[RMDB]
Annotation
An RNA of 207 nucleotides, treated with DMS and 2A3 and read out base by base. For 2A3, 1,470 sequencing reads were counted. The DMS profile rests on 2,128 reads. For DMS the reverse transcriptase was MarathonRT.
RNA sequence: GGGAACGACUCGAGUAGAGUCGAAAAGUGCUGGUUAGUUUUGGAUUGGUGCUACAGCUGCCCUAUGCUCCAUAUCAGAGAUACUACAGCUACUGUGGAAUUAGAAUCCAACAAAAAUGCAAUAGAAUAAAACAGCAGUACAGAGAAUAGGCACUACGACUUAUGGUCAUUUCGAUGACCAUAAGUCAAAAGAAACAACAACAACAAC
Reactivity to DMS in 0.01 (KOAc 150mM, MgCl2 10mM, bicine 150mM(pH8.5), 24C), signal-to-noise 2, nucleotides 027 to 156: g060u000g020c010u010g000g020u010u020a140g010u000u010u010u010g000g020a160u020u010g000g060u010g000c010u000a100c050a050g000c030u000g030c020c020c230u010a060u000g040c010u000c000c030a160u000a150u010c100a030g000a080g030a140u000a120c020u010a030c010a060g000c030u010a030c040u000g060u000g000g000a030a240u000u010a150g010a190a060u000c000c010a020a170c180a060a090a130a090a050u000g000c050a090a160u000a150g010a080a100u000a010a080a070a070c010a090g030c010a020g020u000a150c030a110g010a180g010a030a080u000a050g010g000c000a020c060u000a080c100
Reactivity to 2A3 in 0.01 (KOAc 150mM, MgCl2 10mM, bicine 150mM(pH8.5), 24C), signal-to-noise 3, nucleotides 027 to 156: g040u020g020c010u020g000g130u130u070a080g010u000u030u120u150g100g000a040u000u040g000g010u040g030c020u030a050c020a020g050c060u060g020c000c000c010u050a060u120g050c010u000c020c030a100u040a060u250c040a030g030a000g000a070u050a150c020u040a040c070a050g000c030u030a020c020u060g010u060g050g030a040a040u100u020a100g060a080a060u000c040c000a020a020c020a050a230a020a010a010u090g010c020a010a080u060a150g080a070a090u100a090a130a010a040c020a020g010c010a010g050u070a010c030a030g060a000g020a070a090u090a130g040g020c030a000c070u050a010c120